[RMDB]
RNA sequence: GGGAACGACUCGAGUAGAGUCGAAAAAACUGUUGAUCAACGCUUCCGAUGCGGUAGGCCGGCUCAGCCAGUCCGCCGACCAGUAUCUUUCGGCUGCCCGGGGCGAUCUGCACCAGGACCUGCAGGCCCUAUCGAGAUGAUUCGUCAUCUCGAUAGGAAAAGAAACAACAACAACAAC
Reactivity to 2A3 in 0.01 (KOAc 150mM, MgCl2 10mM, bicine 150mM(pH8.5), 24C), signal-to-noise 6, nucleotides 027 to 126: a000a000c100u070g030u070u070g040a110u090c060a050a030c030g000c030u120u020c020c030g060a070u090g020c020g010g030u040a080g100g000c020c030g010g010c020u030c120a060g060c030c010a020g030u020c010c030g000c010c000g040a040c020c000a070g020u060a060u060c000u000u100u060c020g020g010c020u050g030c010c020c000g020g010g010g000c020g030a070u020c020u040g010c020a030c020c020a050g030g060a060c000c010u040g000c030a050g020g070c000
Reactivity to DMS in 0.01 (KOAc 150mM, MgCl2 10mM, bicine 150mM(pH8.5), 24C), signal-to-noise 3, nucleotides 027 to 126: a060a080c110u000g020u010u000g000a120u000c090a110a110c070g020c040u010u020c050c030g000a030u010g000c080g000g000u010a080g010g030c030c030g010g010c040u050c100a130g010c080c030a060g000u000c020c030g010c020c010g010a070c060c030a060g010u020a030u000c050u000u010u000c040g000g000c070u010g000c070c030c020g010g020g000g010c050g010a050u020c030u010g000c020a070c040c050a100g000g000a060c050c050u000g000c050a030g000g010c120